[RMDB]
This 177-nucleotide RNA was probed chemically with DMS and 2A3. Source: RMDB library TTRINS, as collected in RNAgym. The 2A3 profile rests on 10,779 reads.
RNA sequence: GGGAACGACUCGAGUAGAGUCGAAAAGAUAUGGAGAGCUGAACUACUAAAUAACGGAGCGAUGAAAGUCCUAACUUCGGAAACGAAGUUAGGACUGGAGCUCCCAAUUUAGCAGCUCUCCUAAGUCGAAGUAAUUAGAGUUCGCUCUAAUUACUUCAAAAGAAACAACAACAACAAC
Reactivity to DMS in 0.01 (KOAc 150mM, MgCl2 10mM, bicine 150mM(pH8.5), 24C), signal-to-noise 5, nucleotides 027 to 126: g000a080u000a250u000g000g010a020g020a020g020c010u000g000a060a050c080u010a300c020u000a000a010a010u000a180a170c300g000g030a010g030c010g000a100u020g000a150a130a040g000u000c000c000u010a000a000c000u000u000c000g000g000a070a060a240c000g000a010a010g010u000u010a000g000g010a000c000u000g000g020a080g010c000u000c000c010c070a040a000u000u000u000a010g010c000a010g010c000u000c010u000c000c000u000a000a090g010u010c100
Reactivity to 2A3 in 0.01 (KOAc 150mM, MgCl2 10mM, bicine 150mM(pH8.5), 24C), signal-to-noise 3, nucleotides 027 to 126: g020a040u110a040u200g000g000a000g010a000g030c010u010g010a100a080c050u270a040c010u040a300a030a060u090a130a040c080g020g000a000g040c030g070a110u120g090a160a060a000g000u000c010c000u000a000a010c000u010u010c000g010g020a060a050a050c000g000a000a010g000u000u000a000g000g030a010c000u010g010g000a010g000c000u000c000c000c000a020a010u000u010u010a000g000c000a000g000c000u010c010u010c000c000u010a000a010g000u030c080